[RMDB]
RNA sequence: GGGAACGACUCGAGUAGAGUCGAAAAACAAGAGAUAUUGCUCUAUAAACAGUAACGUCGUUAUCUGUCAUGCCACCGAGGGUUAGCGGUCAUGGUUAACCAAAUAGGGCAGGUUAUUGCAAAGAGAGUGUGCUAGAUCAUUCGUGAUCUAGCACACAAAAGAAACAACAACAACAAC
Reactivity to 2A3 in 0.01 (KOAc 150mM, MgCl2 10mM, bicine 150mM(pH8.5), 24C), signal-to-noise 3, nucleotides 027 to 126: a000c140a030a060g020a020g010a020u030a080u120u120g060c030u000c030u040a060u080a090a190a000c030a000g100u070a030a000c010g100u070c040g010u120u040a080u150c000u000g080u030c020a040u060g030c010c030a100c000c000g020a090g010g140g060u050u030a020g040c030g040g080u110c050a070u120g120g010u020u040a020a010c020c000a000a030a100u090a020g050g000g000c010a000g000g010u020u040a070u040u010g060c090a070a110a010g110a040g010a030
Reactivity to DMS in 0.01 (KOAc 150mM, MgCl2 10mM, bicine 150mM(pH8.5), 24C), signal-to-noise 2, nucleotides 027 to 126: a120c050a060a070g000a110g000a150u040a020u000u010g000c040u000c020u020a080u000a060a020a060c040a090g010u000a000a080c030g000u020c130g000u000u000a020u030c010u000g020u000c040a100u000g000c060c070a070c000c060g010a060g020g000g000u010u000a000g010c020g000g000u020c100a090u030g020g000u040u040a020a000c070c010a000a150a070u040a050g030g000g010c020a030g000g000u010u000a070u000u010g020c120a020a130a040g000a080g020a140
An RNA of 177 nucleotides, treated with 2A3 and DMS and read out base by base. It was measured as part of the RMDB libraries RFM100 and RFMREP. For 2A3, 1,494 sequencing reads were counted. For DMS the reverse transcriptase was MarathonRT.